Source information: This 207-nucleotide RNA was probed chemically with 2A3. For 2A3, 955 sequencing reads were counted. The reactions ran in a buffer of 150 mM KOAc, 10 mM MgCl2 and 150 mM bicine (pH 8.5), at 24 C. It was measured as part of the RMDB library M2RFPK.

RNA sequence: GGGAACGACUCGAGUAGAGUCGAAAAUUAAUGAAGCAAAUCUCCAAACGCCAACGAUGAGCGUUUCGCAAUCGCCGCUUAAGGCUUUUGCCGAGGCUGCUUGAGCCUUGUGACCAAAGAAAAGCCGAAAACCCAAAUGUCUUCGGACAUUUGGGAACCAUUCAUCAAACUUCGGUUUGAUGAAUGGAAAAGAAACAACAACAACAAC
Reactivity to 2A3 in 0.01 (KOAc 150mM, MgCl2 10mM, bicine 150mM(pH8.5), 24C), signal-to-noise 2, nucleotides 027 to 156: u130u150a070a120u140g070a090a000g070c050a050a050a220u080c090u060c040c000a060a050a010c010g000c020c020a100a120c160g220a200u100g040a040g020c010g000u010u040u070c040g000c000a030a030u020c000g010c020c000g090c190u210u200a140a050g000g000c000u000u000u010u010g000c020c010g000a000g000g010c100u180g000c000u060u060g020a000g000c000c000u010u000g060u040g060a050c030c020a020a020a000g020a010a030a020a000g020c010c020g100a010a040a030a090c000c000c000a000a000a000u010g000u000c020u000u060c260g040g020a000c010a000u000u000u000g010g000g000a000a000